RNA sequence: GGGAACGACUCGAGUAGAGUCGAAAAUUUUAUGAGGUAAAGCGAAUGAUUAGAGGCCUUGGGGUUGAAACAACCUUAACCUAUUCUCAAACUUUAAAUAUGUAAGAAGCCCUUGUUACUUAAGUGACAUUACUCUAGAGUUCGCUCUAGAGUAAUGAAAAGAAACAACAACAACAAC
Reactivity to DMS in 0.01 (KOAc 150mM, MgCl2 10mM, bicine 150mM(pH8.5), 24C), signal-to-noise 4, nucleotides 027 to 126: u010u020u010u020a020u010g000a150g030g020u010a020a030a030g000c060g010a100a080u010g010a050u010u020a060g020a100g000g010c180c150u000u010g010g020g000g000u000u000g000a130a100a100c120a030a010c030c030u000u000a070a130c040c010u000a060u000u010c000u000c020a050a130a100c020u010u000u000a030a060a060u010a070u010g000u020a030a060g020a060a110g000c030c010c020u010u000g010u000u000a030c030u020u000a050a080g000u020g000a210
Reactivity to 2A3 in 0.01 (KOAc 150mM, MgCl2 10mM, bicine 150mM(pH8.5), 24C), signal-to-noise 4, nucleotides 027 to 126: u090u060u050u050a100u150g040a030g090g020u060a000a040a010g020c080g050a110a040u060g050a040u070u070a080g040a040g070g010c010c030u080u120g040g000g000g000u030u040g090a190a060a010c040a020a010c010c000u010u020a030a030c000c000u020a070u090u000c040u010c000a060a130a060c030u030u050u090a040a080a100u290a120u160g040u040a080a030g030a060a040g040c000c000c000u020u080g030u030u050a100c060u120u090a110a100g030u040g060a010